Notes:
The data come from the RNA Mapping Database (RMDB), library TTRDES. Chemical mapping of a 177-nucleotide RNA with 2A3 and DMS. High 2A3 reactivity points to a flexible backbone, as in loops and unpaired stretches. DMS (dimethyl sulfate) methylates the pairing face of unpaired adenines and cytosines. The reactions ran in a buffer of 150 mM KOAc, 10 mM MgCl2 and 150 mM bicine (pH 8.5), at 24 C.

[RMDB]
RNA sequence: GGGAACGACUCGAGUAGAGUCGAAAAGAUAUGGAGCUACAAGGCUUUUGACGCAAUUUGGGUCGGAAACGACCCUGAUUGCGAUAAGCCUGUAGCUCCUAAGUCAAAAGCCAGGUUCGCCUGGCAAGAUUCUUAGUGCGUUCGCGCACUAAGAAUCAAAAGAAACAACAACAACAAC
Reactivity to 2A3 in 0.01 (KOAc 150mM, MgCl2 10mM, bicine 150mM(pH8.5), 24C), signal-to-noise 1, nucleotides 027 to 126: g000a010u070a000u090g000g000a000g000c010u000a010c100a250a250g090g000c040u070u200u290u300g270a130c140g040c000a000a000u000u000u050g030g040g000u010c050g010g000a010a100a060c030g020a000c030c030c000u020g010a000u010u010g000c000g010a010u060a030a000g010c010c040u020g010u000a010g000c000u000c000c000u010a000a000g000u010c000a080a000a010a120g020c020c000a030g030g060u080u130c300g050c070c000u000g000g000c000a000a000
Reactivity to DMS in 0.01 (KOAc 150mM, MgCl2 10mM, bicine 150mM(pH8.5), 24C), signal-to-noise 2, nucleotides 027 to 126: g000a040u000a300u010g020g000a020g010c000u000a010c020a060a070g070g010c010u000u010u000u010g010a250c130g020c000a010a010u000u000u000g030g030g020u000c000g030g000a050a060a130c000g020a000c000c000c000u000g010a000u010u000g010c020g000a080u010a020a020g020c000c010u000g000u000a000g000c000u000c010c000u000a000a050g000u020c030a150a070a070a220g020c000c000a030g000g030u000u010c230g020c020c000u000g040g030c020a030a030